[RMDB]
RNA sequence: GGGAACGACUCGAGUAGAGUCGAAAAGUUUUCUCUAUCCUGAAGGCCUUCAGGUUCGAUCACAUAUUCAGAGAUAAUUGUGAGUGAGAUGUAUGGAUGGGAAAAGAGAGCACCAUUUAUUAGGUACUUUUUAUAUCAAGUACUUUGUAUUUAGUCCACAAUGUCCAGAAUUCGUUCUGGACAUUGUAAAAGAAACAACAACAACAAC
Reactivity to 2A3 in 0.01 (KOAc 150mM, MgCl2 10mM, bicine 150mM(pH8.5), 24C), signal-to-noise 3, nucleotides 027 to 156: g020u050u030u190u010c010u000c000u040a030u040c020c010u060g090a100a040g240g020c020c030u040u040c030a050g100g000u050u040c030g050a060u020c010a010c010a030u150a060u130u140c040a050g050a020g040a200u090a110a080u100u030g010u010g010a020g030u100g020a030g010a040u100g070u180a040u090g010g010a010u020g020g000g000a050a070a020a000g020a000g000a000g000c030a010c020c020a030u020u050u070a080u040u090a020g000g000u000a000c000u050u080u090u080u190a220u050a060u300c050a000a000g000u000a000c000u050u010u030g010u000a060u070u110u100a070g030u120c010c120
Reactivity to DMS in 0.01 (KOAc 150mM, MgCl2 10mM, bicine 150mM(pH8.5), 24C), signal-to-noise 2, nucleotides 027 to 156: g010u000u000u000u010c010u000c030u000a120u000c030c000u000g030a090a090g020g010c070c010u000u000c040a060g020g010u000u000c020g020a080u000c030a070c030a070u010a100u000u010c050a230g000a200g020a130u000a030a110u000u000g040u000g000a080g020u000g010a080g010a100u000g020u010a040u000g020g010a100u000g030g000g010a030a060a070a130g000a090g000a080g020c030a110c030c010a060u000u000u000a040u000u000a070g000g000u000a000c000u020u000u000u030u020a120u020a140u090c100a010a030g020u000a010c000u000u000u010g010u000a040u010u010u000a080g010u010c050c060

Structure probing data (2A3 and DMS) for a 207-nucleotide construct. The reactions ran in a buffer of 150 mM KOAc, 10 mM MgCl2 and 150 mM bicine (pH 8.5), at 24 C. DMS (dimethyl sulfate) methylates the pairing face of unpaired adenines and cytosines.